[RMDB]
RNA sequence: GGGAACGACUCGAGUAGAGUCGAAAAUAGCUGUCUUCAGACACUCCAGAAGAGGGAGUCAGAUCUUGUUACGGAUGGUUGUGAGCCACCAUGUGGUUGCUGGGAUUUGAACUCUGGACCAUCGGAACGAUUUAAAUAGCUUCGGCUAUUUAAAUCGAAAAGAAACAACAACAACAAC
Reactivity to DMS in 0.01 (KOAc 150mM, MgCl2 10mM, bicine 150mM(pH8.5), 24C), signal-to-noise 4, nucleotides 027 to 126: u000a100g020c090u000g000u000c020u020u010c130a130g010a090c080a060c060u010c010c010a100g010a170a110g010a150g020g010g010a080g010u010c030a040g000a050u000c020u000u000g010u000u000a080c070g000g020a020u000g010g000u010u000g030u010g000a090g010c050c040a050c010c030a070u000g010u000g010g010u010u000g010c040u010g010g000g010a090u010u010u010g010a040a110c040u000c010u000g020g010a080c060c020a060u000c060g000g010a130a170
Reactivity to 2A3 in 0.01 (KOAc 150mM, MgCl2 10mM, bicine 150mM(pH8.5), 24C), signal-to-noise 3, nucleotides 027 to 126: u070a010g030c020u010g020u040c020u120u080c060a020g020a040c010a010c020u000c020c020a030g040a160a030g060a110g040g000g020a010g030u000c010a020g020a090u000c020u100u110g020u070u090a020c030g080g020a020u020g010g050u070u070g080u090g120a010g030c000c010a010c030c010a090u210g070u090g180g050u070u060g000c050u090g050g000g000a050u070u040u130g030a070a030c010u030c000u030g020g010a010c020c000a030u050c040g050g020a080a030